[RMDB]
RNA sequence: GGGAACGACUCGAGUAGAGUCGAAAAAUCUCAAAUGACGGGGUAGCGUUAUGAAGGGGAUCACUAAUACUCCGAAUAGCGUCAGCCGAAUACAGACGGUUGGGGUUAUAAGCUCGGUGAAGUCGUGUGUCGUGUGUAGUUUCGACUACACACGACAAAAAGAAACAACAACAACAAC
Reactivity to 2A3 in 0.01 (KOAc 150mM, MgCl2 10mM, bicine 150mM(pH8.5), 24C), signal-to-noise 2, nucleotides 027 to 126: a000u040c040u000c050a120a120a000u160g020a010c040g010g000g000g000u000a000g000c000g000u000u070a030u140g020a100a000g060g020g000g060a080u070c030a000c160u200a060a130u080a170c000u010c000c000g000a020a020u010a110g050c140g300u020c000a000g080c040c000g000a040a040u170a240c130a100g080a070c000g000g000u000u000g000g000g000g000u030u010a030u040a020a020g020c050u000c000g040g000u070g170a090a040g040u040c000g060u030g000
Reactivity to DMS in 0.01 (KOAc 150mM, MgCl2 10mM, bicine 150mM(pH8.5), 24C), signal-to-noise 2, nucleotides 027 to 126: a080u000c000u040c000a050a090a040u060g040a110c040g000g010g000g010u050a100g000c050g020u000u000a020u000g030a140a200g000g000g000g000a180u020c140a060c160u030a100a070u060a130c080u010c050c030g010a160a030u040a000g000c000g000u000c030a300g010c050c000g010a060a080u070a090c300a110g000a090c110g020g000u000u000g000g000g000g020u000u000a040u000a120a070g020c040u010c000g040g000u000g010a150a170g020u000c040g000u000g020
Conditions: 150 mM KOAc, 10 mM MgCl2 and 150 mM bicine (pH 8.5), 24 C.
This 177-nucleotide RNA was probed chemically with 2A3 and DMS.
DMS adducts were read by reverse transcription with MarathonRT.
It was measured as part of the RMDB libraries RFM100 and RFMREP.
2A3 adducts were read by reverse transcription with SuperScript II with manganese.
The 2A3 profile rests on 617 reads.